RNA sequence: GGGAACGACUCGAGUAGAGUCGAAAAGCUGAAAGCUUCGGCUUUCAGCAAAGAAAAAGAUGUACAGCUUCUAAGGUACAUCAAGAAUAGAUGCGAAAAGAAAAAGCUUAACGUUCGCGUUAAGCAAGUGUAAGUCAUAGUUCGCUAUGACUUACACAAAAGAAACAACAACAACAAC
Reactivity to DMS in 0.01 (KOAc 150mM, MgCl2 10mM, bicine 150mM(pH8.5), 24C), signal-to-noise 4, nucleotides 027 to 126: g010c010u000g010a000a020a000g020c000u000u020c210g030g000c000u000u000u000c010a020g000c000a010a040a080g000a040a100a070a130a090g000a010u000g000u000a000c000a120g000c120u010u000c140u020a120a080g010g010u000a000c000a010u010c000a080a060g020a070a090u010a050g010a090u010g010c090g000a060a060a080a070g000a080a080a090a110a140g010c020u000u010a000a010c000g010u000u010c270g010c000g000u000u000a000a010g010c000a030a030
Reactivity to 2A3 in 0.01 (KOAc 150mM, MgCl2 10mM, bicine 150mM(pH8.5), 24C), signal-to-noise 6, nucleotides 027 to 126: g000c000u010g000a000a000a000g010c000u040u080c180g100g000c000u000u000u000c000a000g010c010a000a030a010g050a010a130a010a000a000g000a000u010g000u000a000c010a060g060c110u180u050c090u280a140a040g090g000u010a000c000a000u000c010a000a020g080a050a050u170a050g130a080u140g100c130g100a070a070a060a060g180a020a080a020a060a000g000c000u010u000a000a010c000g030u020u050c220g010c000g060u000u000a000a000g000c010a010a010